[RMDB]
RNA sequence: GGGAACGACUCGAGUAGAGUCGAAAACUUAACGCGUUCGCGCGUUAAGAAACAAGAUAAACAUCGAGUUGACGAUGACACAAAUACCGUCAGUGUAGACGGAAAGCAUUCGCUUCGGCGAAUGCAACAAAUAUUGGGGUUUCGACCCCAAUAUUUGAAAAGAAACAACAACAACAAC
Reactivity to 2A3 in 0.01 (KOAc 150mM, MgCl2 10mM, bicine 150mM(pH8.5), 24C), signal-to-noise 2, nucleotides 027 to 126: c000u010u000a000a010c010g040c000g050u060u090c230g030c000g000c000g170u000u010a010a000g000a040a080a010c050a040a040g060a100u110a120a110a000c010a040u000c000g020a010g030u040u070g090a060c010g060a070u120g050a030c040a000c000a220a100a020u150a170c020c000g000u010c000a080g120u110g130u300a090g000a020c000g000g000a050a080a000g010c010a000u010u010c000g000c010u060u070c220g120g000c000g000a000a000u000g000c000a010a030
Reactivity to DMS in 0.01 (KOAc 150mM, MgCl2 10mM, bicine 150mM(pH8.5), 24C), signal-to-noise 4, nucleotides 027 to 126: c000u000u000a010a000c010g020c000g010u000u000c190g040c010g040c000g000u000u000a010a010g010a080a080a080c100a140a130g000a070u010a130a130a130c040a050u000c000g000a180g010u000u000g010a110c090g010a040u010g010a120c210a070c130a090a110a080u000a090c020c010g000u000c000a120g000u010g010u000a090g000a030c000g000g000a050a050a060g000c000a010u000u000c000g020c000u000u010c190g020g030c000g010a010a000u000g010c000a040a050
Chemical mapping of a 177-nucleotide RNA with 2A3 and DMS. For 2A3 the reverse transcriptase was SuperScript II with manganese. DMS adducts were read by reverse transcription with MarathonRT. It was measured as part of the RMDB library M2PK50. Values cover nucleotides 27 to 126. The 2A3 profile rests on 1,915 reads. High 2A3 reactivity points to a flexible backbone, as in loops and unpaired stretches.